[RMDB]
RNA sequence: GGGAACGACUCGAGUAGAGUCGAAAAGGGUGAUGUCUCCUAACCUUUAUCAAUGGGGGCACUCGGUCGUGCUGUGGGUAGAAAUUUUAUCUCGUGCCUACCUUAGACGCUUGUCGUCGGGAGUAUGUGGGACUGAUGAACUUCGGUUCAUCAGUAAUCUUUCGCAAGUGUUCGCACUUGCGAAAGAAAAAGAAACAACAACAACAAC
Reactivity to 2A3 in 0.01 (KOAc 150mM, MgCl2 10mM, bicine 150mM(pH8.5), 24C), signal-to-noise 1, nucleotides 027 to 156: g050g000g010u040g030a050u040g010u000c000u020c000c000u090a140a180c000c000u080u160u150a190u110c060a030a090u110g000g000g000g000g000c000a020c000u090c030g010g000u020c030g000u050g010c030u010g080u060g010g040g010u010a000g220a090a120a080u140u130u110u070a080u130c010u000c060g090u050g010c000c000u010a060c030c000u070u060a010g000a020c000g040c040u190u220g170u300c000g000u010c010g000g010g010a020g010u020a020u120g040u070g000g000g000a000c000u000g000a010u000g000a000a000c000u040u050c180g080g020u010u000c000a000u000c000a000g000u010a000a000
Structure probing data (2A3) for a 207-nucleotide construct. The RNA was probed in 150 mM KOAc, 10 mM MgCl2 and 150 mM bicine (pH 8.5) at 24 C. For 2A3 the reverse transcriptase was SuperScript II with manganese. Reactivities are rounded to 0.1 and cut off at 0 and 3.